[RMDB]
RNA sequence: GGGAACGACUCGAGUAGAGUCGAAAAGUGUUAGCGUUCGCGCUAACACAAAGUACGCUGCAACGCGCAGCGCGCUCGCGAGAGCACGAAAGAGCGUUAUAAAAAGCUCGGGCUUCGGCCCGAGCAACUUCUAGAACUAGUUCGCUAGUUCUAGAAGAAAAGAAACAACAACAACAAC
Reactivity to DMS in 0.01 (KOAc 150mM, MgCl2 10mM, bicine 150mM(pH8.5), 24C), signal-to-noise 2, nucleotides 027 to 126: g010u000g000u000u000a010g010c000g000u000u020c150g030c020g020c000u000a000a020c000a000c000a020a050a110g010u000a070c080g010c000u010g010c010a070a030c080g040c080g010c020a010g010c010g010c090g000c000u000c010g000c300g030a190g000a020g010c010a090c090g000a080a110a060g010a090g010c010g010u000u000a180u010a030a110a100a150a090g000c000u000c000g000g000g020c010u000u030c210g030g000c000c010c000g000a020g010c020a020a010
Reactivity to 2A3 in 0.01 (KOAc 150mM, MgCl2 10mM, bicine 150mM(pH8.5), 24C), signal-to-noise 2, nucleotides 027 to 126: g010u000g000u000u000a010g010c020g010u030u050c250g030c020g010c110u010a000a000c010a010c010a000a010a010g050u030a020c050g010c000u020g010c060a260a080c070g050c000g000c090a000g020c000g000c010g000c000u020c010g040c030g030a080g000a010g170c040a000c080g130a090a080a070g110a020g000c020g010u080u020a180u120a240a190a040a030a050g000c010u010c000g050g010g000c010u090u080c300g120g000c020c020c000g000a000g000c010a000a000